[RMDB]
RNA sequence: GGGAACGACUCGAGUAGAGUCGAAAAUCCUGAUGCCGCUCCAGAAGUUGGGAUGUAUCUUGUGAUAGCUGGGUUUUAUAAGUGCAAUAUUAAAGUAAACCAUGAGUCUUUUAAGCCCAGCAUGUGGGAAUUAUUGAUCGUUCGCGAUCAAUAAUUCAAAAGAAACAACAACAACAAC
Reactivity to 2A3 in 0.01 (KOAc 150mM, MgCl2 10mM, bicine 150mM(pH8.5), 24C), signal-to-noise 1, nucleotides 027 to 126: u020c010c000u020g010a020u050g050c000c000g060c040u010c050c050a070g020a280a030g290u190u080g030g000g000a010u050g010u010a050u000c040u050u140g080u040g020a070u120a090g000c000u000g000g000g050u080u070u120u000a050u020a020a070g060u050g030c010a030a030u120a030u290u190a210a050a150g060u100a150a060a040c010c010a000u110g030a010g090u050c000u140u000u000u000a000a000g010c000c050c030a000g020c000a000u050g000u010g110g210
Reactivity to DMS in 0.01 (KOAc 150mM, MgCl2 10mM, bicine 150mM(pH8.5), 24C), signal-to-noise 1, nucleotides 027 to 126: u000c000c000u000g010a040u010g020c010c070g010c080u000c000c040a090g020a090a140g010u000u010g000g030g000a170u000g010u010a030u000c010u020u000g000u000g000a140u000a110g010c000u000g000g010g050u000u010u000u010a010u010a010a020g030u010g000c030a070a140u000a150u000u000a090a120a220g010u010a060a090a100c160c140a050u000g020a150g000u000c000u000u000u010u020a000a070g000c040c000c000a000g010c000a020u000g010u000g030g000